[RMDB]
RNA sequence: GGGAACGACUCGAGUAGAGUCGAAAAUAUCUGGCCCCAAAUGUCAGUAGCACUGAGGUUGAAACCUUGAUAAUGUACUUAAAAAGCUAAUGGCACACUUAGAACAGUAUUUGGUAAUGGCACAAUGCAGAAUUCACGAUUUCGAUCGUGAAUUCUGAAAAGAAACAACAACAACAAC
Reactivity to 2A3 in 0.01 (KOAc 150mM, MgCl2 10mM, bicine 150mM(pH8.5), 24C), signal-to-noise 1, nucleotides 027 to 126: u130a000u010c010u070g060g020c000c000c010c000a000a140a040u070g010u070c030a010g000u060a010g000c030a010c170u120g000a000g060g060u080u210g110a160a040a050c030c010u060u010g040a030u020a150a120u130g070u190a100c010u140u130a110a060a000a000a010g040c020u050a030a030u060g010g000c010a060c000a010c050u030u120a000g090a100a010c030a040g040u030a070u030u070u090g000g000u100a160a100u130g000g000c070a070c020a110a060u180g040
Reactivity to DMS in 0.01 (KOAc 150mM, MgCl2 10mM, bicine 150mM(pH8.5), 24C), signal-to-noise 2, nucleotides 027 to 126: u000a040u010c030u000g000g000c060c040c030c100a020a090a070u000g000u030c020a040g020u010a070g000c020a140c150u000g010a060g000g030u000u000g010a140a150a190c010c020u000u020g010a140u020a080a070u000g000u030a080c110u000u000a010a070a150a190a110g020c050u010a010a050u000g020g010c010a010c120a050c070u000u020a050g000a010a020c080a060g020u000a010u020u030u000g010g010u000a050a060u000g010g000c090a070c100a020a050u000g000